Structure probing data (2A3) for a 207-nucleotide construct. Conditions: 150 mM KOAc, 10 mM MgCl2 and 150 mM bicine (pH 8.5), 24 C. The data come from the RNA Mapping Database (RMDB), library VIROID.
[RMDB]
RNA sequence: GGGAACGACUCGAGUAGAGUCGAAAAUCCUCAAGUUUCUUGAUUUUCUUCUUUACCUUCCGGAGUUCCCUUUCGAGUUCCUCCAACUUCUUUCUUCCAUUCACCCACUGCUCGAGAACCUCUUCUCUGCCCUCGCGCUGUUUCUUCGAUUCGGAACCCAUACGUUAAACUUCGGUUUAACGUAUGGAAAAGAAACAACAACAACAAC
Reactivity to 2A3 in 0.01 (KOAc 150mM, MgCl2 10mM, bicine 150mM(pH8.5), 24C), signal-to-noise 2, nucleotides 027 to 156: u040c020c010u090c110a140a080g060u090u200u140c030u110u180g010a040u000u010u030u020c020u030u000c010u050u060u020a030c020c030u060u030c060c070g000g040a060g040u010u010c030c010c010u010u040u060c060g010a030g000u050u000c020c010u020c000c020a050a050c020u120u090c010u050u140u000c000u100u020c040c010a100u010u110c020a060c010c010c010a040c020u020g010c020u010c040g030a050g020a120a060c010c010u030c000u050u010c030u000c010u050g020c050c000c000u010c010g010c020g020c010u000g020u020u020u000c020u040u020c010g140a160u150u080c060g050g020a070a060c000